[RMDB]
RNA sequence: GGGAACGACUCGAGUAGAGUCGAAAAAAAGCCUCAUUUCACACACACACGAGAAUCGAAACGAUUACUCUAGAAGGAUAGGUUUCAUCCCUUCUUCCUGUCCGUUCCUGACGUUGACUCGUGAGCAGAAUGGUAUCAUGUUCGCAUGAUACCAUUCAAAAGAAACAACAACAACAAC
Reactivity to DMS in 0.01 (KOAc 150mM, MgCl2 10mM, bicine 150mM(pH8.5), 24C), signal-to-noise 5, nucleotides 027 to 126: a040a060a120g010c020c030u010c080a090u010u000u000c060a070c100a060c110a080c120a120c050a060c080g020a030g000a080a080u000c080g010a070a080a090c130g010a100u000u000a080c090u000c030u000a060g010a060a060g000g000a050u000a030g000g010u000u000u010c100a110u000c040c010c020u000u010c050u000u000c010c000u000g010u000c060c000g000u000u000c010c020u000g000a080c090g020u010u000g000a120c080u000c040g010u010g000a120g030c200a130
Reactivity to 2A3 in 0.01 (KOAc 150mM, MgCl2 10mM, bicine 150mM(pH8.5), 24C), signal-to-noise 3, nucleotides 027 to 126: a000a010a020g070c020c020u070c060a080u060u120u100c060a080c010a010c000a000c020a010c000a000c090g020a010g030a050a090u130c060g080a200a080a080c050g020a050u060u200a160c030u040c020u030a020g020a050a020g030g010a020u030a050g040g040u040u130u100c050a090u090c010c000c050u000u020c030u040u000c000c010u030g030u000c020c020g070u060u030c000c020u050g020a030c040g030u030u040g040a030c010u010c030g020u020g040a020g020c030a000